[RMDB]
Chemical mapping of a 177-nucleotide RNA with 2A3 and DMS. The RNA was probed in 150 mM KOAc, 10 mM MgCl2 and 150 mM bicine (pH 8.5) at 24 C. The 2A3 profile rests on 599 reads.

RNA sequence: GGGAACGACUCGAGUAGAGUCGAAAAUGGAUUUCGCGGCCGCACUGGCUGAUUCGGAUUUCACCGCCGCCGGGCAGCUGCUGACCGCGUCGCAUGAGUCCAUGCGCGAGGACUUCGCCAUCACCACAUGGGAGGAACCUUUCGAGGUUCCUCCCAUAAAAGAAACAACAACAACAAC
Reactivity to 2A3 in 0.01 (KOAc 150mM, MgCl2 10mM, bicine 150mM(pH8.5), 24C), signal-to-noise 2, nucleotides 027 to 126: u080g030g000a000u060u150u110c050g000c010g000g000c010c020g110c060a030c070u050g080g000c000u080g060a050u090u050c050g000g000a020u090u070u160c180a090c090c150g010c010c010g000c000c000g040g000g000c010a010g000c050u090g060c030u000g000a160c030c070g000c050g000u040c010g040c030a050u160g050a000g150u070c130c000a000u030g000c030g000c000g000a070g080g200a130c040u010u010c030g000c010c010a070u100c030a040c060c000a120c000
Reactivity to DMS in 0.01 (KOAc 150mM, MgCl2 10mM, bicine 150mM(pH8.5), 24C), signal-to-noise 1, nucleotides 027 to 126: u000g010g000a020u000u060u030c040g040c040g010g000c040c090g060c000a100c000u000g030g000c010u000g000a160u000u040c100g010g000a110u000u000u000c100a060c090c120g000c180c140g000c300c000g000g000g000c000a100g030c150u000g080c090u000g000a100c080c030g040c150g000u040c000g000c060a060u120g000a160g000u040c040c000a080u000g000c050g020c000g000a040g000g000a070c120u020u020c000g000c000c020a160u020c190a140c040c000a010c300